An RNA of 207 nucleotides, treated with 2A3 and read out base by base.
The 2A3 profile rests on 545 reads.
RNA sequence: GGGAACGACUCGAGUAGAGUCGAAAAGAGAGAGCGUCUACGGGUGAGAGGGGUCUUCUGGGGUGUUGGCAGUGCUCUGUUUCUUAACCUCGGUGAUUAUUAUACAGGUGUUCACUUUGUAAUAAUUCUUUAUGUGAGGCACUUUUCUGUAUGCACACCAUGCCUAAAUGUUCGCAUUUAGGCAUGGAAAAGAAACAACAACAACAAC
Reactivity to 2A3 in 0.01 (KOAc 150mM, MgCl2 10mM, bicine 150mM(pH8.5), 24C), signal-to-noise 1, nucleotides 027 to 156: g020a000g020a000g010a010g000c070g060u060c020u060a030c060g040g000g010u130g010a070g010a010g010g020g010g130u070c040u110u020c110u170g080g000g000g000u070g020u010u120g070g000c120a080g050u010g040c010u000c010u050g020u000u060u000c010u060u050a090a100c040c000u080c060g060g050u020g080a080u040u240a000u090u080a030u030a030c020a030g000g010u010g000u090u050c000a010c000u140u090u070g020u020a010a050u030a080a100u280u050c050u080u300u020a140u270g020u020g010a000g050g040c020a030c000u170u100u140u060c020u000g000u050a010u070g030c090a020c010a030